[RMDB]
RNA sequence: GGGAACGACUCGAGUAGAGUCGAAAACGGACUUUCUUCUAUCUCCGAAGCCGGUUUGAGGCCCGGCGAAACGCGGGCCUGUCUCCUAAGAUGCCUCCGCUAGUCGAGCGGACUUGGCCUCUUCCGCCCGAGGACCUUUUCUUUCUGAUCUUGCUUGACGUAUUCAUGAGUUCGCUCAUGAAUACGUAAAAGAAACAACAACAACAAC
Reactivity to 2A3 in 0.01 (KOAc 150mM, MgCl2 10mM, bicine 150mM(pH8.5), 24C), signal-to-noise 2, nucleotides 027 to 156: c020g010g050a030c020u120u180u010c030u120u060c030u140a200u040c080u080c050c060g040a060a010g030c030c050g050g000u010u040u100g050a020g000g010c000c020c010g070g030c030g060a100a110a010c230g000c040g000g000g000c000c030u020g020u000c050u000c010c010u030a020a060g000a040u040g040c000c010u010c020c020g000c010u060a100g140u200c090g060a010g010c000g000g000a010c010u030u060g000g000c000c000u040c000u050u010c000c020g020c000c000c030g050a030g020g000a090c000c020u030u130u080u070c030u010u120u000c080u050g090a170u020c060u080u140g030c020u040u100g050